[RMDB]
RNA sequence: GGGAACGACUCGAGUAGAGUCGAAAAGAAUUUGAUGCAGCUUCACUGAGACAUUGUUUGUGUACCAAUAUUUAUACUCCAGGGGAGUCCAAAAUAUGGCAUCCCGCGAUGAGCUCUUGUGCCAAUCCACUUAUCGCUGAUUCGUCAGCGAUAAGUGAAAAGAAACAACAACAACAAC
Reactivity to DMS in 0.01 (KOAc 150mM, MgCl2 10mM, bicine 150mM(pH8.5), 24C), signal-to-noise 3, nucleotides 027 to 126: g000a100a080u000u010u000g020a040u000g010c140a080g020c050u010u000c030a030c050u010g010a100g000a060c040a050u010u000g010u010u000u010g000u000g010u010a070c050c050a030a070u010a020u000u000u000a130u010a130c040u000c000c050a190g030g020g010g000a070g010u000c090c090a050a040a050a050u010a040u000g000g000c040a040u000c040c050c080g020c050g020a070u000g000a110g000c030u000c010u010u000g000u000g020c050c020a040a080u010c080
Reactivity to 2A3 in 0.01 (KOAc 150mM, MgCl2 10mM, bicine 150mM(pH8.5), 24C), signal-to-noise 2, nucleotides 027 to 126: g030a080a050u140u100u150g030a020u070g030c030a000g060c040u050u040c010a010c060u060g020a010g010a050c020a050u060u060g040u090u140u130g070u040g030u060a040c000c000a030a010u020a010u040u030u010a110u050a040c020u030c000c020a050g180g030g000g040a030g030u010c010c020a070a140a040a010u080a090u040g010g000c020a070u060c020c020c020g000c020g030a050u050g020a010g010c000u010c030u120u100g050u030g030c000c020a040a020u020c010